The data come from the RNA Mapping Database (RMDB), library OK2TRN. This 177-nucleotide RNA was probed chemically with 2A3 and DMS. The 2A3 profile rests on 1,305 reads. For 2A3 the reverse transcriptase was SuperScript II with manganese.
RNA sequence: GGGAACGACUCGAGUAGAGUCGAAAAGCAGCGGGCGGAUCUUGAGCGACACUAGUACACCUAAAUUAUUGCUACCCAGACGAUCUAAGCUCGACGGACAGUGGUUCGACUGAGGAUUGGCCGAUUCGGCCAGUCUUACGUUCGCGUAAGACUGGCCAAAAGAAACAACAACAACAAC
Reactivity to 2A3 in 0.01 (KOAc 150mM, MgCl2 10mM, bicine 150mM(pH8.5), 24C), signal-to-noise 2, nucleotides 027 to 126: g040c030a000g080c000g060g030g000c010g040g000a020u020c030u110u090g050a030g000c040g050a040c010a020c100u080a010g050u120a080c000a020c060c000u060a100a050a050u220u130a070u060u210g000c030u050a060c000c000c000a020g040a110c040g020a020u030c000u050a010a050g030c030u030c010g050a030c020g020g010a020c000a010g120u080g040g080u110u060c040g040a000c030u030g050a000g000g050a080u060u030g080g000c030c040g040a090u080u130c040
Reactivity to DMS in 0.01 (KOAc 150mM, MgCl2 10mM, bicine 150mM(pH8.5), 24C), signal-to-noise 2, nucleotides 027 to 126: g010c050a060g000c040g040g020g020c050g010g000a070u000c020u000u000g000a140g030c030g020a060c090a030c110u000a060g020u000a100c110a130c080c000u000a040a070a050u010u000a130u000u010g010c040u000a110c030c040c010a070g030a140c100g010a010u000c020u000a100a090g030c030u000c040g010a060c070g040g000a060c090a120g030u010g020g000u010u020c050g000a100c020u000g000a070g000g000a100u000u010g030g020c000c030g020a160u010u020c060